[RMDB]
RNA sequence: GGGAACGACUCGAGUAGAGUCGAAAAGAUCCACUUCGGUGGAUCGGAUCCUAAGUCCAACGCAAUGUGCUGGAGGUCGAUAAGAGUCGGAAACGACUCUUUUGACGACCGAUGAAAGCAUGACGUUGGAUAUGGAGAUGGAAUUCUUCGGAAUUCCGUUACUUAGUGUUUUCGAACACUAAGUAACAAAAGAAACAACAACAACAAC
Reactivity to 2A3 in 0.01 (KOAc 150mM, MgCl2 10mM, bicine 150mM(pH8.5), 24C), signal-to-noise 6, nucleotides 027 to 156: g000a000u000c000c000a000c000u040u090c300g110g000u000g000g000a000u000c010g000g030a030u020c000c000u030a090a030g020u000c000c000a010a000c000g000c020a030a050u060g000u000g020c000u000g000g020a010g000g000u000c000g000a010u010a060a010g000a000g000u000c010g000g050a060a070a050c010g000a000c000u010c010u020u020u000u030g080a050c020g000a010c010c000g040a090u020g010a010a000a000g030c010a010u060g290a050c000g000u000u010g000g000a000u000a010u020g000g000a110g060a060u240g000g000a000a000u020u020c030u070u110c300g100g010a000a010u000u000c000c000
Reactivity to DMS in 0.01 (KOAc 150mM, MgCl2 10mM, bicine 150mM(pH8.5), 24C), signal-to-noise 5, nucleotides 027 to 156: g000a010u010c000c010a020c020u000u000c300g060g020u000g010g010a010u010c010g000g010a120u000c010c010u000a100a280g020u000c000c000a020a030c010g020c020a100a140u010g030u000g020c010u000g000g000a170g040g020u000c000g030a180u000a030a030g000a040g030u000c020g030g000a190a130a300c000g010a020c000u000c000u000u000u000u000g010a300c120g010a010c000c010g000a140u010g010a220a180a060g020c010a020u000g000a040c030g000u010u000g000g000a020u000a020u010g010g010a080g000a150u000g020g010a040a020u000u000c010u000u000c280g040g010a040a020u000u000c000c000
Chemical mapping of a 207-nucleotide RNA with 2A3 and DMS.
The DMS profile rests on 13,025 reads.
Values cover nucleotides 27 to 156.